[RMDB]
RNA sequence: GGGAACGACUCGAGUAGAGUCGAAAACUGCAAGCGGUGAGGAGGAUGUCGUCGGUGGGUCUCGGUUCGAGACGCUUGAAUAACGGGAGGAGCGCUGUUGGCGUGUGCCGGUCCCUGCUCUGUAGGGGGUGGUCGGGUGGUUCGCCGCCCGACUACCAAAAGAAACAACAACAACAAC
Reactivity to 2A3 in 0.01 (KOAc 150mM, MgCl2 10mM, bicine 150mM(pH8.5), 24C), signal-to-noise 6, nucleotides 027 to 126: c020u060g020c030a040a020g030c010g030g040u060g020a060g030g010a020g020g000a020u020g020u030c030g000u000c010g020g030u030g010g020g020u000c010u000c010g070g030u080u110c040g010a000g010a030c010g030c040u040u090g040a070a030u110a080a010c030g010g010g010a030g000g010a030g000c010g000c020u030g010u090u050g020g000c000g000u060g010u040g030c000c020g020g000u000c000c000c000u000g010c000u010c020u070g020u020a040g010g020g000
Reactivity to DMS in 0.01 (KOAc 150mM, MgCl2 10mM, bicine 150mM(pH8.5), 24C), signal-to-noise 6, nucleotides 027 to 126: c020u000g000c090a080a070g000c060g000g020u000g000a100g010g010a060g010g010a040u010g010u010c050g020u000c030g010g010u000g000g000g010u000c010u010c050g010g010u030u030c050g010a060g000a030c040g000c040u000u010g010a090a060u020a090a110c070g010g010g000a070g000g000a090g000c050g010c040u000g010u000u000g010g010c090g010u010g000u010g010c040c020g000g010u010c010c020c010u000g000c020u020c070u020g000u010a050g010g000g010